[RMDB]
Overview:
Chemical mapping of a 207-nucleotide RNA with 2A3 and DMS. DMS adducts were read by reverse transcription with MarathonRT. Values are in units of 0.01, from 0 to 300, in steps of 10.

RNA sequence: GGGAACGACUCGAGUAGAGUCGAAAAUGCACUGGUACGAUACGUCGUACCAGUGCAGUCGUUGGGAUGGAACGCAAUUAAAUACAUGUGUGACGUGUAUUUGCGAACGACGUAAUUAUUUUUCAAAAUCACGCUAUCGUGUUCGCACGAUAGCGAACAAGAAUGAAGCGUUCGCGCUUCAUUCUUGAAAAGAAACAACAACAACAAC
Reactivity to 2A3 in 0.01 (KOAc 150mM, MgCl2 10mM, bicine 150mM(pH8.5), 24C), signal-to-noise 2, nucleotides 027 to 156: u160g000c000a000c000u010g000g030u010a000c000g000a060u060a050c260g160u000c000g000u000a000c000c000a000g010u000g000c010a000g000u020c000g010u010u050g140g050g040a060u060g030g110a130a070c040g000c000a010a030u200u050a080a030a040u050a000c020a040u050g030u080g150u170g200a090c020g000u010g000u010a030u000u030u050g000c000g000a030a020c000g020a010c020g010u060a100a010u140u140a110u040u210u020u020u090c110a140a080a000a080u140c100a020c140g000c000u000a000u020c020g000u050g020u070u040c240g060c080a000c000g030a020u000a020g010c000g000a000a020
Reactivity to DMS in 0.01 (KOAc 150mM, MgCl2 10mM, bicine 150mM(pH8.5), 24C), signal-to-noise 1, nucleotides 027 to 156: u000g020c000a000c000u020g000g000u000a000c000g040a050u010a060c230g130u020c000g070u000a020c010c000a010g000u000g030c000a010g000u010c040g020u000u000g000g010g030a280u010g020g000a180a200c030g020c010a080a140u000u010a020a000a010u000a010c000a020u020g040u000g010u000g010a060c060g050u000g010u020a020u000u000u000g010c020g010a060a170c000g010a280c040g030u000a030a080u000u000a150u000u010u000u010u010c090a070a080a130a240u000c090a180c020g080c000u000a060u000c000g050u010g030u000u000c220g030c030a040c020g030a030u000a000g010c000g010a010a080
Conditions: 150 mM KOAc, 10 mM MgCl2 and 150 mM bicine (pH 8.5), 24 C. For 2A3, 894 sequencing reads were counted.